[RMDB]
RNA sequence: GGGAACGACUCGAGUAGAGUCGAAAAACUAGUAUGUACAGGGGUAAGUUGACCUGUCAUCUAGACAACUUACCAGGUACUCAAAGGUAAGUUGGUUGAGUACCACAGAGUACAAACUAAGUACUCAGACUAUGGAUGCCUUCGGGUAUCUAUAGUCAAAAGAAACAACAACAACAAC
Reactivity to DMS in 0.01 (KOAc 150mM, MgCl2 10mM, bicine 150mM(pH8.5), 24C), signal-to-noise 8, nucleotides 027 to 126: a090c010u000a000g000u020a020u000g000u020a000c000a030g010g010g000g010u010a040a050g010u000u010g000a120c040c010u000g000u020c120a060u030c050u010a010g000a120c010a010a010c010u000u000a030c000c000a130g000g020u020a040c100u010c090a030a060a050g010g000u010a040a060g010u010u000g000g000u020u020g000a050g000u000a050c000c000a180c190a090g010a050g000u000a010c010a010a090a080c150u020a070a070g010u000a020c000u000c010a160
Reactivity to 2A3 in 0.01 (KOAc 150mM, MgCl2 10mM, bicine 150mM(pH8.5), 24C), signal-to-noise 5, nucleotides 027 to 126: a000c000u000a010g020u030a020u010g020u030a000c000a010g020g000g020g030u070a060a040g080u060u040g090a060c000c020u000g020u010c000a020u010c010u000a010g030a040c010a000a010c000u000u010a010c000c000a010g020g020u030a020c010u010c040a030a030a000g050g010u040a010a060g020u030u030g010g000u020u020g020a000g020u000a010c000c010a020c040a020g040a010g000u000a000c000a000a050a000c040u060a080a000g010u000a020c000u000c010a010
Structure probing data (DMS and 2A3) for a 177-nucleotide construct.
Values are in units of 0.01, from 0 to 300, in steps of 10.
Source: RMDB library OK1LIB, as collected in RNAgym.
Conditions: 150 mM KOAc, 10 mM MgCl2 and 150 mM bicine (pH 8.5), 24 C.
The DMS profile rests on 32,566 reads.
As a SHAPE reagent, 2A3 marks flexible, mostly unpaired nucleotides at the ribose 2'-OH.